[RMDB]
RNA sequence: GGGAACGACUCGAGUAGAGUCGAAAACUUCCCUCAAAAUCGUUUCAGUCCAAAAUUGAUUCGGCGGCCCUGUCAUGAGGCCGAAACGAAGGCACGUACCCCUUCGAAUGGCGUCGGGGAGUCAGCGAAAGCACUGACCCUUUCGAGGGUCAGUGAACACAACUACAAAGUUCGCUUUGUAGUUGUGAAAAGAAACAACAACAACAAC
Reactivity to DMS in 0.01 (KOAc 150mM, MgCl2 10mM, bicine 150mM(pH8.5), 24C), signal-to-noise 2, nucleotides 027 to 156: c070u000u000c000c000c000u000c090a060a080a090a110u010c020g010u000u000u000c010a040g040u000c060c100a090a090a200a130u000u000g010a100u000u010c060g000g010c090g030g010c070c000c020u000g030u020c090a080u010g010a120g010g010c000c010g020a020a040a040c030g010a080a040g000g000c060a130c110g020u010a140c050c060c000c010u000u000c030g000a080a110u000g010g020c040g000u000c040g000g020g050g000a070g010u000c070a100g020c030g010a150a110a140g010c030a020c010u010g000a000c000c000c020u000u000u000c230g020a020g020g030g030u000c010a020g020u000g010a040a150
Reactivity to 2A3 in 0.01 (KOAc 150mM, MgCl2 10mM, bicine 150mM(pH8.5), 24C), signal-to-noise 3, nucleotides 027 to 156: c010u030u010c010c050c000u070c020a120a140a010a090u070c030g000u000u020u030c050a070g030u040c080c100a080a100a140a210u100u130g040a080u100u040c040g080g000c010g020g020c070c010c020u070g040u130c040a110u090g040a030g050g000c000c000g030a010a000a000c010g000a010a000g030g000c110a010c130g210u200a110c010c010c010c020u000u010c020g040a070a080u110g040g010c040g070u030c030g040g020g010g010a050g050u030c040a030g020c010g090a090a030a020g030c000a000c000u000g000a000c000c000c010u040u020u090c160g090a020g000g000g000u000c000a000g000u000g000a010a000
Structure probing data (DMS and 2A3) for a 207-nucleotide construct. The DMS profile rests on 5,106 reads. Source: RMDB library M2RFPK, as collected in RNAgym.